[RMDB]
RNA sequence: GGGAACGACUCGAGUAGAGUCGAAAAAUACUCCUCAGGAUGGCGCGUUGCAGUCCAACAAGAUCCAGGGACUGUACAGAAUUUUCCUAUACCUCGAGUCGGGUUUGGAAUCUAAGGUUGACUCGCUAAAACUUUACGUGGUUCGCCACGUAAAGAACACAGUCGAUUUCUUCGGAAAUCGACUGUGAAAAGAAACAACAACAACAAC
Reactivity to 2A3 in 0.01 (KOAc 150mM, MgCl2 10mM, bicine 150mM(pH8.5), 24C), signal-to-noise 1, nucleotides 027 to 156: a000u080a040c050u000c000c010u030c040a050g090g060a080u080g060g110c050g000c050g100u100u120g000c000a000g000u000c010c000a060a060c040a070a250g170a100u060c050c020a020g080g040g000a000c000u010g000u030a000c020a040g190a170a040u040u010u050u000c020c020u050a040u080a030c010c000u030c020g000a030g040u070c070g020g000g000u030u100u050g000g020a020a130u000c020u120a120a100g140g000u010u040g050a020c020u050c050g000c050u090a130a120a080a050c000u100u000u000a000c010g000u000g010g000u040u040c240g020c060c000a000c000g000u000a000a000a000g000a000a000